[RMDB]
This 177-nucleotide RNA was probed chemically with DMS and 2A3. Values cover nucleotides 27 to 126. Source: RMDB library M2PK50, as collected in RNAgym. For 2A3, 4,688 sequencing reads were counted.
RNA sequence: GGGAACGACUCGAGUAGAGUCGAAAAGAAUUCUUGUUCGCAAGAAUUCAAAUAAGAAAGCUGACCAGCUAUGAGGUCAUACAUCGUCAUUGCACAAAAUAAAAAGCUUUGUCUUCGGACAAAGCAACGAUACUGCUUAGUUCGCUAAGCAGUAUCGAAAAGAAACAACAACAACAAC
Reactivity to DMS in 0.01 (KOAc 150mM, MgCl2 10mM, bicine 150mM(pH8.5), 24C), signal-to-noise 2, nucleotides 027 to 126: g000a030a020u000u000c030u010u000g000u010u010c180g010c020a000a020g010a040a010u000u000c000a080a110a100u040a060a080g000a080a120a090g020c230u000g020a060c020c030a190g030c010u000a010u000g020a080g000g010u000c010a060u010a110c130a080u010c130g010u000c040a010u000u010g030c060a180c250a080a060a030a010u010a020a100a080a150a160g000c000u000u000u000g000u000c000u000u000c150g030g000a040c000a000a000a000g000c000a000a000
Reactivity to 2A3 in 0.01 (KOAc 150mM, MgCl2 10mM, bicine 150mM(pH8.5), 24C), signal-to-noise 4, nucleotides 027 to 126: g000a010a000u000u010c000u010u010g020u050u090c140g000c080a010a010g000a000a000u010u000c000a030a010a030u150a030a030g200a200a060a020g070c080u030g020a010c000c000a000g000c010u020a050u080g030a020g010g020u020c010a010u110a140c080a100u130c110g050u000c020a020u000u100g000c030a030c040a060a160a050a030u270a080a130a050a050a010g000c000u000u000u000g000u000c000u000u090c250g070g000a000c000a000a000a000g000c000a000a000